Conditions: 150 mM KOAc, 10 mM MgCl2 and 150 mM bicine (pH 8.5), 24 C. An RNA of 177 nucleotides, treated with 2A3 and DMS and read out base by base. It was measured as part of the RMDB libraries RFM100 and RFMREP. Reactivities are given for positions 27 through 126. The 2A3 profile rests on 11,938 reads.

RNA sequence: GGGAACGACUCGAGUAGAGUCGAAAAGCAACUCCCACACUCAUGAGCGUCCUCAUACUGUUCUGGGCGCUUCUCACAGGUGCUUCUUUUAGUGUCUCCCAUUGGCCCAGAUCGGUACUGCGCGAGUUUUAAACUAGCUGUUCGCAGCUAGUUUAAAAAAAGAAACAACAACAACAAC
Reactivity to 2A3 in 0.01 (KOAc 150mM, MgCl2 10mM, bicine 150mM(pH8.5), 24C), signal-to-noise 9, nucleotides 027 to 126: g060c030a030a110c040u020c010c030c010a020c020a000c000u120c020a110u170g060a020g040c020g030u070c020c030u080c020a060u050a110c030u080g040u080u030c010u010g000g010g000c030g000c000u030u010c020u010c000a110c020a020g010g060u040g040c010u040u090c020u040u180u070u130a060g020u060g030u050c020u020c040c030c040a070u040u140g070g000c000c000c000a000g000a030u040c000g000g020u030a040c030u040g020c010g000c020g040a050g010u020
Reactivity to DMS in 0.01 (KOAc 150mM, MgCl2 10mM, bicine 150mM(pH8.5), 24C), signal-to-noise 6, nucleotides 027 to 126: g010c160a070a090c100u010c030c010c030a140c190a090c080u000c060a090u020g010a070g020c000g000u010c110c040u020c160a170u020a070c070u010g000u010u000c050u000g010g000g000c020g020c070u010u000c030u020c050a080c130a070g000g000u000g000c030u000u010c170u000u000u010u000a060g010u010g000u020c030u000c010c020c030a120u020u030g010g000c010c000c000a030g000a020u000c000g020g010u000a030c170u000g010c050g000c050g000a080g010u000